Overview:
The record gives the reactivity of an RNA of 207 nucleotides to 2A3. It was measured as part of the RMDB library OK3TST. Values cover nucleotides 27 to 156.

RNA sequence: GGGAACGACUCGAGUAGAGUCGAAAACUUUCAUGGAUGGUAGAAGGAUUCAUGGCUCCAUGCGCUAAAGUCUACCAAAGCAUUCCUUUAUCUGCUGGGACUUAAAGACUCUGGCAAGAGAUAUUGAACUUUCUCAAUUACUUGCUAUUUUUAUGUAGUCUCCCUGAAAAUUCGUUUUCAGGGAGACAAAAGAAACAACAACAACAAC
Reactivity to 2A3 in 0.01 (KOAc 150mM, MgCl2 10mM, bicine 150mM(pH8.5), 24C), signal-to-noise 1, nucleotides 027 to 156: c010u080u080u090c100a060u020g040g000a020u040g020g090u030a140g010a150a000g130g010a040u110u080c050a070u070g060g000c010u020c100c020a060u130g020c080g000c070u150a090a040a040g070u000c010u040a080c050c010a060a010a060g030c070a040u100u110c030c000u060u120u090a170u100c070u000g000c010u070g000g110g000a020c000u020u030a070a010a000g040a020c010u020c000u060g010g010c020a010a040g060a000g070a030u070a100u170u130g060a030a000c020u170u180u000c010u000c000a000a110u000u030a070c000u000u000g100c000u130a180u160u090u010u130u170a060u090g040u010a020